This 177-nucleotide RNA was probed chemically with 2A3 and DMS. Reactivities are given for positions 27 through 126.
RNA sequence: GGGAACGACUCGAGUAGAGUCGAAAAGCAAAGAAAUUUUAUCCCAAUAAGGCGAAGCGUGCAAGUCGAAUAAAGCUAAUGGUGCUAGCGAGCACGCGAGCCCUAGCAGACUCCUAGCGAGAAAAAACAACUUAGAUGACUUCGGUCAUCUAAGUUGAAAAGAAACAACAACAACAAC
Reactivity to 2A3 in 0.01 (KOAc 150mM, MgCl2 10mM, bicine 150mM(pH8.5), 24C), signal-to-noise 1, nucleotides 027 to 126: g020c060a070a000a070g190a020a230a100u080u130u040u100a120u060c030c000c010a030a040u110a060a000g010g000c000g090a080a010g000c010g020u010g000c030a110a000g130u070c030g050a070a060u230a300a060a000g030c010u020a140a160u300g230g020u140g020c000u010a040g020c010g000a010g010c030a000c030g000c030g010a010g010c000c010c000u000a040g010c000a020g080a060c020u030c020c020u060a070g030c100g080a000g000a140a040a000a000a000a040
Reactivity to DMS in 0.01 (KOAc 150mM, MgCl2 10mM, bicine 150mM(pH8.5), 24C), signal-to-noise 2, nucleotides 027 to 126: g030c100a020a050a030g000a050a130a100u000u000u000u000a080u020c000c020c000a150a100u020a100a060g010g000c030g000a110a190g000c000g010u000g000c000a120a160g000u010c020g000a110a140u040a030a120a130g020c020u000a000a020u020g010g020u020g010c020u000a140g000c050g000a270g010c040a020c000g000c000g000a230g000c000c000c000u000a090g010c110a130g050a140c030u000c040c040u000a110g000c090g000a030g040a030a030a050a080a070a140
The RNA was probed in 150 mM KOAc, 10 mM MgCl2 and 150 mM bicine (pH 8.5) at 24 C. The 2A3 profile rests on 1,022 reads. For DMS, 863 sequencing reads were counted. 2A3 adducts were read by reverse transcription with SuperScript II with manganese.